[RMDB]
Annotation
Chemical mapping of a 207-nucleotide RNA with 2A3. Source: RMDB library RNAMAK, as collected in RNAgym. The RNA was probed in 150 mM KOAc, 10 mM MgCl2 and 150 mM bicine (pH 8.5) at 24 C. Values cover nucleotides 27 to 156.
RNA sequence: GGGAACGACUCGAGUAGAGUCGAAAACGAACGCUGACUUCGGUCAGCGUUCGAAAACCUUUGUGGCUAGACAUGCUCAUUGGUACGCCCAUUGGGCGUCCAGGGAGCAACAGCUAGCCACUCUGGUAAAAGGAGUAUCACCUUCGGGUGAUACUCCGAAGUACUCGUCCUUCGGGACGAGUACUUCAAAAGAAACAACAACAACAAC
Reactivity to 2A3 in 0.01 (KOAc 150mM, MgCl2 10mM, bicine 150mM(pH8.5), 24C), signal-to-noise 1, nucleotides 027 to 156: c000g020a000a000c000g030c020u000g020a010c020u070u060c300g020g000u000c010a000g000c000g000u000u030c000g010a000a010a000a000c000c000u020u000u010g000u010g010g000c000u000a000g040a130c040a200u070g000c000u000c000a050u010u020g000g080u180a000c000g000c000c000c120a300u300u300g000g010g000c000g000u010c000c000a000g000g020g000a000g000c000a030a000c020a000g000c000u000a000g000c000c000a000c000u020c000u000g030g030u130a160a080a120a100g010g000a010g000u010a000u010c010a010c000c000u070u100c300g080g000g000u000g000a000u000a000c000u000c000c000